Structure probing data (2A3 and DMS) for a 177-nucleotide construct. The data come from the RNA Mapping Database (RMDB), library OK1LIB. Conditions: 150 mM KOAc, 10 mM MgCl2 and 150 mM bicine (pH 8.5), 24 C.
RNA sequence: GGGAACGACUCGAGUAGAGUCGAAAACGGGCCGCCGCCGGGGUGGAAGUACUACGGCGUGCACCUUGGCAUCAAGGCAGAGGCCAUGAACGUGCGGUACAGCCUCAACGCAUCUGACACGGCGACGAUGGCAUAUGAGGUUCGCCUCAUAUGCCAUAAAAGAAACAACAACAACAAC
Reactivity to 2A3 in 0.01 (KOAc 150mM, MgCl2 10mM, bicine 150mM(pH8.5), 24C), signal-to-noise 4, nucleotides 027 to 126: c020g030g050g010c000c000g000c010c020g010c010c000g050g000g010g010u060g040g090a140a020g090u060a060c030u070a080c050g020g000c030g070u080g010c000a020c010c010u000u000g020g020c000a070u070c040a140a070g060g000c020a010g070a040g090g000c020c000a030u020g030a040a020c060g010u090g020c030g010g020u090a080c020a070g020c020c000u040c060a060a050c030g020c030a040u020c040u050g020a040c020a020c070g040g000c010g010a010c010g040
Reactivity to DMS in 0.01 (KOAc 150mM, MgCl2 10mM, bicine 150mM(pH8.5), 24C), signal-to-noise 3, nucleotides 027 to 126: c110g000g000g010c020c030g040c030c030g000c080c000g000g000g000g030u000g010g010a110a060g080u030a090c060u030a040c050g000g000c040g000u040g010c040a110c020c020u000u020g000g000c030a110u020c050a090a090g000g020c110a160g000a280g000g030c090c000a150u030g000a020a060c120g000u100g000c000g010g000u030a010c030a110g000c030c000u010c030a130a150c090g020c000a100u000c070u000g000a170c100a090c020g020g000c050g010a120c140g010